[RMDB]
RNA sequence: GGGAACGACUCGAGUAGAGUCGAAAAUGAGUACGUACAUACGUAGUACGAUCCAUGUGCUGACUAGGUACCGAUCACGAUCCAGAGACUGAUCACGAGUACGUACCGCGCGUACACGUCCAUGGUAGCCUAGGCAAGGGUUCGCCCUUGCCUAGGCAAAAGAAACAACAACAACAAC
Reactivity to DMS in 0.01 (KOAc 150mM, MgCl2 10mM, bicine 150mM(pH8.5), 24C), signal-to-noise 2, nucleotides 027 to 126: u020g030a080g010u000a050c030g030u000a030c060a270u000a160c270g040u000a040g000u000a040c080g000a040u010c040c080a020u000g010u000g000c040u000g010a110c140u010a010g000g040u000a030c100c000g000a090u000c020a040c110g020a150u000c060c120a140g010a260g010a160c200u010g000a010u000c040a130c080g000a120g000u020a150c170g000u000a050c040c100g020c070g020c040g010u000a040c090a080c160g000u000c130c050a080u000g000g020u000a080
Reactivity to 2A3 in 0.01 (KOAc 150mM, MgCl2 10mM, bicine 150mM(pH8.5), 24C), signal-to-noise 2, nucleotides 027 to 126: u160g010a020g040u030a040c010g010u000a060c050a080u190a120c120g120u060a050g010u010a030c000g000a020u020c010c030a050u140g040u020g000c020u010g000a090c040u030a050g000g030u000a040c000c010g020a020u010c000a000c140g000a040u010c040c060a060g050a000g060a300c140u070g020a010u020c000a010c180g000a020g030u050a020c010g000u010a090c000c020g050c060g000c050g040u040a070c000a050c030g000u000c010c000a120u010g000g050u080a090

The record gives the reactivity of an RNA of 177 nucleotides to DMS and 2A3.
For 2A3, 1,478 sequencing reads were counted.